[RMDB]
RNA sequence: GGGAACGACUCGAGUAGAGUCGAAAAGAAAGCAUGACUUUUGGGGUUUCCCAGGAUGCAGAUCAGACGGAGCUCUUGGAGGAGUUCUCCUACAAGUUUGCCUAUGACAUGCAAGACGGUCUCACAAACGAGACAGAUGAUUCGUCAUCUGUCUCGUAAAAGAAACAACAACAACAAC
Reactivity to 2A3 in 0.01 (KOAc 150mM, MgCl2 10mM, bicine 150mM(pH8.5), 24C), signal-to-noise 1, nucleotides 027 to 126: g040a030a050a010g040c020a030u060g060a300c020u130u050u090u090g070g020g000g030u050u220u200c000c000c000a000g040g000a030u050g010c000a020g020a120u070c030a020g060a080c090g040g040a030g010c020u000c000u060u120g070g000a150g040g040a020g030u220u070c050u000c040c010u010a060c030a040a060g000u040u110u090g050c000c000u120a130u080g030a040c020a040u060g030c020a060a020g070a020c110g050g000u020c010u030c010a100c000a050a210
Reactivity to DMS in 0.01 (KOAc 150mM, MgCl2 10mM, bicine 150mM(pH8.5), 24C), signal-to-noise 3, nucleotides 027 to 126: g000a070a110a040g010c020a090u000g010a250c030u000u000u010u000g010g010g000g030u000u010u010c010c000c000a170g000g000a090u000g000c040a050g000a150u000c020a060g000a140c220g000g000a120g020c120u000c000u010u000g010g010a050g010g000a060g010u010u000c100u000c000c000u000a110c100a030a060g010u010u010u010g010c010c040u000a130u000g010a050c190a080u010g000c020a110a050g010a090c140g000g000u010c020u010c040a100c160a050a110